[RMDB]
RNA sequence: GGGAACGACUCGAGUAGAGUCGAAAAUAGGCACGGAAAGGGCUUGUGGCAUUGUUGGAGUCAAGAAUUUCGGACAAGCAUCAUUAGGCUCUACACAAAUGAAGCGUCAGCAAAUGGUUAGAUAGAGAUCACAAAUGUAAUAACAGAUCCCCACAACCACCAUACUAAAAUUCGUUUUAGUAUGGUGAAAAGAAACAACAACAACAAC
Reactivity to DMS in 0.01 (KOAc 150mM, MgCl2 10mM, bicine 150mM(pH8.5), 24C), signal-to-noise 5, nucleotides 027 to 156: u010a090g000g050c020a120c020g030g010a070a100a100g000g020g030c040u000u000g020u000g020g060c030a150u000u000g010u000u000g010g010a120g010u010c030a060a130g010a080a120u000u000u000c060g010g010a100c050a070a140g020c070a080u000c040a090u000u000a150g030g010c020u000c020u000a080c060a100c040a040a070a110u000g020a070a100g000c060g000u000c070a040g010c040a060a050a080u000g010g010u000u000a080g010a150u010a050g000a150g010a080u010c050a080c080a050a060a070u000g010u000a050a080u000a080a090c060a120g010a110u000c020c000c000c030a070c050a080a130c100
Reactivity to 2A3 in 0.01 (KOAc 150mM, MgCl2 10mM, bicine 150mM(pH8.5), 24C), signal-to-noise 6, nucleotides 027 to 156: u140a040g030g000c030a000c050g050g020a080a050a060g050g020g000c040u060u070g030u050g040g020c050a050u020u080g040u040u080g020g020a020g020u040c020a030a030g060a090a080u090u090u140c080g040g020a030c040a070a030g000c000a040u050c010a010u090u080a030g010g000c010u000c020u060a030c070a000c010a050a110a040u120g020a080a020g030c000g050u050c040a020g000c040a030a040a100u060g030g000u050u010a010g010a030u050a030g060a010g000a050u070c020a000c040a100a070a030u150g010u080a030a060u070a170a020c030a010g040a080u030c010c000c010c000a050c020a030a020c040